[RMDB]
RNA sequence: GGGAACGACUCGAGUAGAGUCGAAAAGCUUCGCAGGCUGACGUUACUGACGUGGUGCCAGCGACGGAGGGCGAGAACGCCAGCGCGGCGCAGCCGGACGUGAACGCGCAGAUCACCGCAGCGGUUGCACUCGGAGGGGGUUCGCCCCCUCCGAGUGAAAAGAAACAACAACAACAAC
Reactivity to DMS in 0.01 (KOAc 150mM, MgCl2 10mM, bicine 150mM(pH8.5), 24C), signal-to-noise 1, nucleotides 027 to 126: g030c110u000u000c050g000c050a150g010g000c010u000g030a030c080g020u000u000a080c180u010g000a140c040g000u000g000g000u010g020c050c030a050g000c020g000a040c040g010g000a090g000g010g000c050g010a070g020a060a100c080g010c020c030a040g000c070g020c090g010g030c060g000c020a090g010c040c020g020g010a070c240g010u010g020a050a080c140g000c120g020c070a120g020a050u000c050a070c060c150g000c080a160g000c070g000g010u000u000g010

Record summary
Structure probing data (DMS) for a 177-nucleotide construct. It was measured as part of the RMDB library OK2TRN. Reactivities are given for positions 27 through 126. The RNA was probed in 150 mM KOAc, 10 mM MgCl2 and 150 mM bicine (pH 8.5) at 24 C.